[RMDB]
RNA sequence: GGGAACGACUCGAGUAGAGUCGAAAAGAAAUGUCUGUGAGAAUUUUCUAUGUGUAAGGCACACUCUUCAGAAUCAUAAAGGGACAUAGAGAAGGACAACGAAAGCCCUUGACUUCAGCACAUUAUGACCAGGAAUCCAGGUCACAAACAUGAAAUAAUUUAGCUAAAUGUUCGCAUUUAGCUAAAUAAAAGAAACAACAACAACAAC
Reactivity to 2A3 in 0.01 (KOAc 150mM, MgCl2 10mM, bicine 150mM(pH8.5), 24C), signal-to-noise 5, nucleotides 027 to 156: g020a000a070a020u060g020u030c060u050g110u070g060a100g070a210a170u080u090u070u040c050u050a060u090g020u000g040u080a050a080g060g000c030a020c010a010c040u040c000u100u100c060a090g100a180a090u080c030a040u160a130a080a000g030g000g010a010c000a030u070a020g020a010g010a030a040g010g010a010c030a090a010c120g080a070a030a020g030c000c010c000u010u040g030a040c010u050u040c060a010g040c060a020c000a090u050u110a060u220g010a010c010c010a010g040g100a050a020u060c060c030a030g010g020u010c010a010c020a050a060a000c030a030u130g100a100a070a020u200a070
Reactivity to DMS in 0.01 (KOAc 150mM, MgCl2 10mM, bicine 150mM(pH8.5), 24C), signal-to-noise 3, nucleotides 027 to 156: g020a130a140a070u000g010u000c020u010g020u030g010a160g000a210a140u010u000u010u010c020u000a080u010g010u020g010u000a070a110g020g020c040a080c030a110c070u000c040u000u010c060a100g000a100a070u010c070a110u000a040a100a050g010g020g000a070c070a110u010a080g010a080g010a070a070g000g010a090c030a050a170c070g000a090a090a250g010c020c010c060u000u010g000a070c020u000u000c040a070g000c060a030c060a110u000u000a070u010g000a040c000c020a130g020g000a080a140u000c030c050a220g000g030u010c000a040c020a020a040a040c060a080u000g010a100a090a090u000a080
Structure probing data (2A3 and DMS) for a 207-nucleotide construct. DMS adducts were read by reverse transcription with MarathonRT. 2A3 adducts were read by reverse transcription with SuperScript II with manganese. Conditions: 150 mM KOAc, 10 mM MgCl2 and 150 mM bicine (pH 8.5), 24 C. For DMS, 5,471 sequencing reads were counted. DMS (dimethyl sulfate) methylates the pairing face of unpaired adenines and cytosines.